Chemical mapping of a 177-nucleotide RNA with 2A3 and DMS. The DMS profile rests on 10,310 reads. The reactions ran in a buffer of 150 mM KOAc, 10 mM MgCl2 and 150 mM bicine (pH 8.5), at 24 C.

[RMDB]
RNA sequence: GGGAACGACUCGAGUAGAGUCGAAAAGAUAUGGACGGUGAACUACUUUUAGCCGAUGAAAGUUAUCGGAAACGAUAACUGGAGGCUAUCAGCACCGUCCUAAGUCAAACUUCGCUUCGGCGAAGAACAGUGACAUAAUGUUCGCAUUAUGUCACUGAAAAGAAACAACAACAACAAC
Reactivity to 2A3 in 0.01 (KOAc 150mM, MgCl2 10mM, bicine 150mM(pH8.5), 24C), signal-to-noise 5, nucleotides 027 to 126: g020a020u060a040u110g000g010a000c000g000g020u020g020a080a080c080u210a070c020u300u060u050u080a010g010c000c010g090a110u040g010a010a010a000g010u000u000a000u000c010g000g020a060a040a040c010g000a000u010a000a010c000u000g000g010a000g010g000c000u000a020u010c000a000g050c000a000c000c010g000u000c000c000u000a010a000g000u000c010a010a040a080c010u000u000c000g010c010u050u080c300g180g000c010g000a000a000g000a010a020
Reactivity to DMS in 0.01 (KOAc 150mM, MgCl2 10mM, bicine 150mM(pH8.5), 24C), signal-to-noise 6, nucleotides 027 to 126: g000a030u010a300u000g000g000a010c000g010g010u000g000a060a040c050u010a300c030u000u010u000u000a010g020c000c000g010a090u010g010a150a100a010g000u010u000a000u000c000g010g010a090a050a170c000g010a010u000a000a000c000u000g000g000a030g000g010c000u000a010u010c050a010g000c000a000c000c000g010u000c000c000u000a000a050g020u010c030a100a100a180c010u000u000c000g020c000u000u010c190g040g000c000g010a010a010g010a110a150